[RMDB]
RNA sequence: GGGAACGACUCGAGUAGAGUCGAAAAUGUUUGAAGGGAUUAAAAUAGCAGACUCACACUCCCUUUGGUUAAAAGAAAGACUAUGUAUAUCCUUACUUGCCAUGUUCAAAAAACGCGAAAGUGUAAACACCCUUUCCUUAUUCGUAAGGAAAGGGUGAAAAGAAACAACAACAACAAC
Reactivity to DMS in 0.01 (KOAc 150mM, MgCl2 10mM, bicine 150mM(pH8.5), 24C), signal-to-noise 3, nucleotides 027 to 126: u010g000u000u000u000g030a100a150g010g000g010a090u010u020a110a090a100a080u010a050g000c080a070g010a130c020u000c030a120c110a090c170u000c020c070c030u000u000u000g010g020u010u000a010a070a130a110g020a060a110a150g000a090c050u010a040u020g000u000a170u010a060u000c030c010u000u010a060c070u000u010g010c030c010a060u000g000u000u000c070a010a030a070a040a090a090c050g020c030g000a050a040a150g020u000g010u010a040a050a190